This 207-nucleotide RNA was probed chemically with 2A3. For 2A3 the reverse transcriptase was SuperScript II with manganese. The reactions ran in a buffer of 150 mM KOAc, 10 mM MgCl2 and 150 mM bicine (pH 8.5), at 24 C.
RNA sequence: GGGAACGACUCGAGUAGAGUCGAAAAAGAUGGCCGCGACCCAGUCGGGCUCUCCUGAGGGUUCCAUGUGAGCACACAUCAUGCUGUCGGCGCCACCGGUGUCAAUCACCGGAGAGUUGGUCGAAAAGGACGUGGGCCACACAACGGGUUGCUGCAGGUGUACACAAUGUUUCGACAUUGUGUACACAAAAGAAACAACAACAACAAC
Reactivity to 2A3 in 0.01 (KOAc 150mM, MgCl2 10mM, bicine 150mM(pH8.5), 24C), signal-to-noise 2, nucleotides 027 to 156: a000g110a180u150g060g040c060c040g010c030g000a010c000c010c000a010g270u170c080g000g010g000c040u040c000u050c010c110u220g110a150g000g030g050u160u300c010c020a040u150g030u030g060a060g000c010a000c000a000c000a050u020c010a050u140g200c030u050g070u050c010g020g000c020g070c080c000a030c010c030g010g010u020g110u250c150a070a060u300c000a000c000c030g060g000a000g000a000g010u240u270g160g000u040c010g020a000a000a000a000g130g010a030c080g000u000g010g010g000c050c010a010c000a010c000a030a010c080g000g000g000u010u010g000c000u000g000c010a060g000